[RMDB]
RNA sequence: GGGAACGACUCGAGUAGAGUCGAAAAGAGGUUAUACACGUCUGCCCGUAUUGCCGUGUUGGCGUAGGCGGGGCGCCUACAACACCCCAGGGCAUUAUAGCCGAGAUACACUAUGUGGAUGGCGUGCUCCUGGCACAGAAUUCGUUCUGUGCCAGGAAAAAGAAACAACAACAACAAC
Reactivity to DMS in 0.01 (KOAc 150mM, MgCl2 10mM, bicine 150mM(pH8.5), 24C), signal-to-noise 3, nucleotides 027 to 126: g010a220g000g000u010u010a080u000a170c130a050c070g010u000c020u000g010c010c000c010g050u000a040u020u000g050c030c080g020u020g010u000u010g030g040c160g000u000a030g010g010c030g010g030g000g010c030g000c020c010u010a050c040a070a140c070a070c040c030c090c020a160g000g000g010c010a050u000u000a040u010a160g020c060c020g010a130g020a120u000a100c110a050c100u010a080u020g020u000g010g000a130u000g010g000c010g020u010g000c210
Reactivity to 2A3 in 0.01 (KOAc 150mM, MgCl2 10mM, bicine 150mM(pH8.5), 24C), signal-to-noise 2, nucleotides 027 to 126: g030a040g100g000u140u080a150u050a170c020a000c030g040u010c030u050g020c000c000c040g030u030a100u080u190g000c050c020g060u040g090u100u100g070g000c040g010u020a020g010g090c050g050g030g020g080c080g000c040c020u040a020c010a040a020c010a050c030c010c000c050a020g020g030g000c030a020u140u060a110u180a040g020c010c020g000a020g000a010u120a070c080a000c090u130a110u260g040u100g000g060a060u070g040g000c000g000u000g000c010

Source information
This 177-nucleotide RNA was probed chemically with DMS and 2A3. The DMS profile rests on 2,643 reads. The 2A3 profile rests on 1,660 reads.